[RMDB]
RNA sequence: GGGAACGACUCGAGUAGAGUCGAAAAAAUGCUUCAAAGUAAUCCUCAAUUAACCUAGUGAACAUUUUCGUUCUUAAGUCACCAAUGUAUAACUCUCUGUUGCCACCAACCUGCUCUUUGUAGGAUAACGUGUUCGAAGGUUCGCCUUCGAACACGUAAAAGAAACAACAACAACAAC
Reactivity to 2A3 in 0.01 (KOAc 150mM, MgCl2 10mM, bicine 150mM(pH8.5), 24C), signal-to-noise 1, nucleotides 027 to 126: a000a000u130g100c090u060u100c040a150a140a000g000u080a150a120u080c000c050u150c000a000a090u230u230a020a060c020c010u000a060g070u000g190a070a000c010a010u020u020u030u130c100g000u000u010c000u000u010a100a100g040u000c010a000c060c020a000a000u080g140u030a150u110a180a020c000u000c000u020c000u000g000u020u000g170c000c000a080c000c000a070a000c000c000u000g000c000u140c000u050u000u120g020u020a070g020g040a030u040a240